Structure probing data (2A3 and DMS) for a 177-nucleotide construct. 2A3 is a SHAPE reagent: it acylates the 2'-hydroxyl of flexible nucleotides of all four kinds. The 2A3 profile rests on 1,357 reads.
RNA sequence: GGGAACGACUCGAGUAGAGUCGAAAAGUCUCUCACUGACUGAGUGUGUGAGUCUCACUGAGAGUCAGACAGACUCAGACAGUGACAGAGACAGAGUGUCAGACUCUCAGACAGACUCUCUGAGACAACCCUGCCUCGUAUUCGUACGAGGCAGGGUAAAAGAAACAACAACAACAAC
Reactivity to 2A3 in 0.01 (KOAc 150mM, MgCl2 10mM, bicine 150mM(pH8.5), 24C), signal-to-noise 1, nucleotides 027 to 126: g010u000c000u010c010u030c010a020c010u030g110a060c020u030g020a020g000u200g000u010g020u010g060a080g080u000c000u000c010a300c140u160g060a010g010a000g150u010c000a010g020a020c000a000g120a050c020u000c010a020g020a030c050a000g060u020g060a070c080a030g070a000g000a010c010a020g010a020g020u030g040u050c030a030g040a060c000u000c000u000c060a050g000a080c030a020g040a040c020u020c000u020c010u100g000a000g000a060c040a020
Reactivity to DMS in 0.01 (KOAc 150mM, MgCl2 10mM, bicine 150mM(pH8.5), 24C), signal-to-noise 1, nucleotides 027 to 126: g000u010c000u000c010u000c010a010c010u000g010a180c070u000g000a020g020u000g000u000g000u000g000a020g040u000c000u000c120a220c160u000g010a030g000a050g000u000c000a060g000a050c020a030g080a100c000u000c000a020g000a130c080a050g000u000g020a070c230a070g010a020g000a030c000a010g010a000g000u000g020u000c060a120g000a170c070u000c000u000c010a070g000a080c100a100g000a050c100u000c060u000c020u000g000a030g000a100c190a060

2A3 adducts were read by reverse transcription with SuperScript II with manganese.